[RMDB]
RNA sequence: GGGAACGACUCGAGUAGAGUCGAAAAGCCAUGAGUCGCAACGCAAAGCCGCGGCAAGUGGAGUUAGCGAGAAGAGACUAGGCUUUGGUUUCUUCAAGUGGAGCGGUCACCAAUCAGGUGUGGUAGUAGGAGCCUGCAUGGUUCGCCAUGCAGGCAAGUAGUGAUCAUGAUUCGUCAUGAUCACUACAAAAGAAACAACAACAACAAC
Reactivity to DMS in 0.01 (KOAc 150mM, MgCl2 10mM, bicine 150mM(pH8.5), 24C), signal-to-noise 2, nucleotides 027 to 156: g000c000c040a080u000g010a300g050u010c020g010c000a070a090c030g030c030a100a150a280g000c000c020g040c000g030g030c040a030a240g000u010g010g000a070g010u000u000a170g020c010g000a300g000a090a080g000a070g000a020c030u000a060g040g010c090u000u010u000g010g020u000u000u010c000u000u000c020a060a220g010u000g020g000a110g030c030g010g030u010c020a060c020c030a090a140u010c070a070g010g000u000g010u000g000g010u000a060g020u000a140g000g000a100g000c000c010u000g000c000a030u000g010g000u000u010c300g000c010c000a000u000g000c020a000g000g030c010a000a020
Reactivity to 2A3 in 0.01 (KOAc 150mM, MgCl2 10mM, bicine 150mM(pH8.5), 24C), signal-to-noise 4, nucleotides 027 to 156: g020c010c010a030u060g030a000g020u030c010g020c060a050a090c050g050c150a130a200a050g070c060c030g010c040g040g010c060a040a010g020u020g020g040a100g040u050u120a040g040c030g020a060g020a140a020g020a010g010a020c010u030a040g110g110c050u110u100u090g010g000u020u000u000c010u020u030c040a100a050g010u060g050g020a030g020c020g000g050u060c010a010c040c020a040a110u130c050a080g020g000u040g010u060g080g040u060a090g030u040a090g000g160a020g020c000c000u000g000c000a000u000g000g040u040u060c130g030c030c000a000u000g000c020a000g000g000c000a000a010